[RMDB]
Background: This 177-nucleotide RNA was probed chemically with DMS and 2A3. The DMS profile rests on 1,031 reads. For 2A3 the reverse transcriptase was SuperScript II with manganese. The reactions ran in a buffer of 150 mM KOAc, 10 mM MgCl2 and 150 mM bicine (pH 8.5), at 24 C.
RNA sequence: GGGAACGACUCGAGUAGAGUCGAAAAAGACUGACAACAAUCGUAUUGCACGUGCCACGGGUGCCACGAUUAUUAGUCGCGUGGCGGAGCUAACGGAGGACCACAUCGGCCAUGCAGGGUUGAUGGACUCGAGCAUUACUUUCGAGUAAUGCUCGAGAAAAGAAACAACAACAACAAC
Reactivity to DMS in 0.01 (KOAc 150mM, MgCl2 10mM, bicine 150mM(pH8.5), 24C), signal-to-noise 1, nucleotides 027 to 126: a080g020a200c060u000g040a050c060a080a080c060a070a050u010c040g000u020a110u000u020g030c040a020c100g020u000g030c010c000a080c110g070g010g030u000g000c010c300a070c020g000a030u000u000a060u000u020a080g010u010c070g000c070g040u000g000g010c010g000g000a090g000c040u000a050a110c140g010g020a090g020g000a050c080c120a050c050a010u000c050g010g020c000c030a080u000g020c130a060g000g000g030u000u000g000a040u000g000g090a300
Reactivity to 2A3 in 0.01 (KOAc 150mM, MgCl2 10mM, bicine 150mM(pH8.5), 24C), signal-to-noise 1, nucleotides 027 to 126: a000g070a050c060u050g010a010c030a130a000c010a030a140u040c010g010u060a090u080u200g000c000a000c050g040u030g030c000c010a050c070g030g020g000u070g050c060c000a010c010g030a000u150u000a100u140u160a160g080u050c050g010c020g050u020g010g040c040g000g090a050g000c070u050a110a000c050g030g010a020g000g030a070c010c000a020c000a060u030c000g010g000c000c010a050u160g030c000a040g080g060g000u000u030g050a070u020g090g000a080